[RMDB]
RNA sequence: GGGAACGACUCGAGUAGAGUCGAAAAAGUGUAUGAAGUACGUAGAGUGUCGGCAAGCUCUAUAUAUGGACACUUACGAAGGGUUUUGGUCGUUUUGUAUCUCAAGCCGACUUUGAGUAUUUGAGGAAAAAGACUUACGCCUUCGGGCGUAAGUCAACAGAUAGCCAGAGUUCGCUCUGGCUAUCUGAAAAGAAACAACAACAACAAC
Reactivity to DMS in 0.01 (KOAc 150mM, MgCl2 10mM, bicine 150mM(pH8.5), 24C), signal-to-noise 1, nucleotides 027 to 156: a030g050u000g010u020a230u000g000a250a180g020u000a010c000g030u010a040g020a050g060u000g020u000c000g000g000c080a170a300g000c010u000c010u010a010u010a050u000a050u010g000g000a010c010a020c020u020u010a110c050g000a090a050g000g040g030u000u000u000u000g010g020u000c010g020u010u000u000u010g020u010a150u000c020u010c000a020a090g010c040c030g010a100c100u020u000u000g000a080g040u000a070u000u000u000g010a060g030g000a080a150a120a180a060g020a020c000u000u020a000c020g000c010c010u000u020c300g060g030g050c000g000u010a000a000g000u000c000a010a070
Reactivity to 2A3 in 0.01 (KOAc 150mM, MgCl2 10mM, bicine 150mM(pH8.5), 24C), signal-to-noise 2, nucleotides 027 to 156: a000g120u150g010u060a230u180g020a050a020g010u030a000c040g010u020a000g010a000g030u020g040u040c050g020g040c100a140a100g010c000u010c000u000a020u000a030u000a000u030g020g040a020c010a000c000u000u070a030c030g140a110a040g030g060g010u030u070u060u110g030g020u020c030g000u010u050u090u090g040u050a080u070c010u000c020a000a070g030c020c000g030a060c000u080u080u050g030a050g020u020a090u080u070u100g070a060g010g060a060a080a020a040a000g000a000c000u000u000a000c000g000c010c020u030u050c160g060g010g000c020g000u000a000a000g000u000c010a000a000
An RNA of 207 nucleotides, treated with DMS and 2A3 and read out base by base. For 2A3 the reverse transcriptase was SuperScript II with manganese. Values cover nucleotides 27 to 156. The RNA was probed in 150 mM KOAc, 10 mM MgCl2 and 150 mM bicine (pH 8.5) at 24 C. For 2A3, 1,185 sequencing reads were counted. It was measured as part of the RMDB library M2RFPK. For DMS, 1,942 sequencing reads were counted.